[RMDB]
RNA sequence: GGGAACGACUCGAGUAGAGUCGAAAACUUAUGAAACUGUAACAGCUUGGUCAGGUAUUUGUGCUUCAGAUGGCGAUCGCACUUUCGGACUUGUCGUUAAAGAUGUGCAGUUGACGUUGUUUCGUAAUCUAGAUGACAAGUUCUAUUUGACCCCCAGAGUGCAAUACAGAUUCGUCUGUAUUGCACUAAAAGAAACAACAACAACAAC
Reactivity to DMS in 0.01 (KOAc 150mM, MgCl2 10mM, bicine 150mM(pH8.5), 24C), signal-to-noise 2, nucleotides 027 to 156: c060u000u000a080u010g010a160a070a060c040u000g020u000a060a090c040a070g000c050u000u010g010g040u000c020a060g010g010u020a040u000u000u010g080u010g000c050u000u010c060a100g020a100u000g110g020c060g000a060u000c050g020c020a040c060u000u000u010c110g050g010a040c020u000u000g010u000c030g060u000u000a130a150a080g000a020u010g000u030g000c060a070g010u010u000g030a080c170g020u000u010g030u000u010u000c060g010u000a090a030u000c020u000a260g000a040u000g000a060c010a010a020g000u000u000c050u000a080u000u000u010g020a300c010c000c010c000c000a080g010
Reactivity to 2A3 in 0.01 (KOAc 150mM, MgCl2 10mM, bicine 150mM(pH8.5), 24C), signal-to-noise 4, nucleotides 027 to 156: c050u110u100a090u250g110a080a030a090c050u020g010u110a080a010c000a050g070c020u070u050g000g040u100c040a060g030g020u120a150u030u180u100g030u030g000c020u080u020c020a030g020a300u060g050g020c060g060a110u090c030g020c000a020c000u070u110u150c090g020g000a000c000u000u010g000u010c030g020u020u060a090a190a030g010a020u090g070u080g040c030a050g020u090u130g030a030c090g000u010u020g020u030u030u020c020g000u060a030a020u010c010u010a030g010a040u040g010a010c000a010a010g000u010u000c030u010a070u030u060u100g080a050c000c000c000c000c000a020g040